[RMDB]
RNA sequence: GGGAACGACUCGAGUAGAGUCGAAAAAGAAAUAAAGUGUACCAAAUGGUACGUACACACCAAGUGUGCGUUGGUCGCACACAACCAGCAGUCAAUGGAGACUGCAAAAACAAACCAAAGAAAAAAAGUAGUAGCUAUAGUUCGCUAUAGCUACUACAAAAGAAACAACAACAACAAC
Reactivity to 2A3 in 0.01 (KOAc 150mM, MgCl2 10mM, bicine 150mM(pH8.5), 24C), signal-to-noise 2, nucleotides 027 to 126: a000g030a010a070a030u200a040a080a030g030u000g000u010a000c000c030a050a160a250u190g060g010u090a030c040g020u050a000c010a000c010a000c050c060a160a110g000u000g000u010g030c010g040u040u080g150g070u140c020g000c000a000c000a000c000a000a030c020c010a020g000c000a000g010u000c020a060a190u190g220g010a100g000a060c000u000g000c000a060a000a000a000a000c010a020a040a010c030c010a090a100a040g170a060a090a020a020a010a000a020
Reactivity to DMS in 0.01 (KOAc 150mM, MgCl2 10mM, bicine 150mM(pH8.5), 24C), signal-to-noise 2, nucleotides 027 to 126: a110g020a130a090a090u010a050a060a030g000u000g030u000a020c000c080a130a110a200u000g020g000u000a110c200g000u030a030c000a010c080a140c080c120a090a210g000u000g000u000g000c000g000u000u010g010g000u000c080g030c030a000c000a000c010a120a040c070c040a060g010c000a000g000u000c010a130a110u000g010g000a160g000a000c000u000g020c000a000a050a070a080a060c100a030a050a020c010c010a030a190a160g050a020a060a050a100a020a090a140
Description:
An RNA of 177 nucleotides, treated with 2A3 and DMS and read out base by base. The 2A3 profile rests on 2,890 reads. For 2A3 the reverse transcriptase was SuperScript II with manganese. High 2A3 reactivity points to a flexible backbone, as in loops and unpaired stretches. Source: RMDB library M2PK90, as collected in RNAgym.